[RMDB]
This 177-nucleotide RNA was probed chemically with DMS and 2A3.
The RNA was probed in 150 mM KOAc, 10 mM MgCl2 and 150 mM bicine (pH 8.5) at 24 C.
For 2A3, 2,198 sequencing reads were counted.

RNA sequence: GGGAACGACUCGAGUAGAGUCGAAAAUGCGAUAAACGGCACCUAUAAGGUGGUGCCGAACCAGCGUGACCUACCAACACGCAACGAGCAGUCUGGUAUGACUGCUAACCUAUGGUAAACAAAAGAACCAAAACUACAUCUUCGGAUGUAGUUUUGGAAAAGAAACAACAACAACAAC
Reactivity to DMS in 0.01 (KOAc 150mM, MgCl2 10mM, bicine 150mM(pH8.5), 24C), signal-to-noise 2, nucleotides 027 to 126: u000g000c100g020a190u030a070a080a130c000g000g010c000a010c000c000u000a170u010a230a070g000g010u000g000g020u000g040c010c020g010a040a030c130c090a110g000c000g000u000g020a030c060c010u000a060c020c020a270a050c020a000c000g010c020a090a100c120g000a020g000c000a030g000u000c000u000g040g010u000a060u010g030a060c000u000g030c000u000a000a040c030c010u000a030u000g000g020u010a040a130a030c240a030a030a070a070g020a030a180
Reactivity to 2A3 in 0.01 (KOAc 150mM, MgCl2 10mM, bicine 150mM(pH8.5), 24C), signal-to-noise 2, nucleotides 027 to 126: u070g020c020g070a070u110a100a140a080c010g000g000c010a000c010c030u120a120u050a300a120g270g010u120g000g000u000g000c020c000g000a010a010c000c000a000g000c000g020u000g010a080c020c030u010a040c010c010a000a040c010a000c010g000c010a020a080c070g040a020g000c000a000g000u000c010u130g120g160u250a150u260g010a010c000u000g000c000u000a000a030c000c000u030a070u170g050g000u060a080a070a010c050a040a080a010a000g090a040a050

The DMS profile rests on 1,025 reads.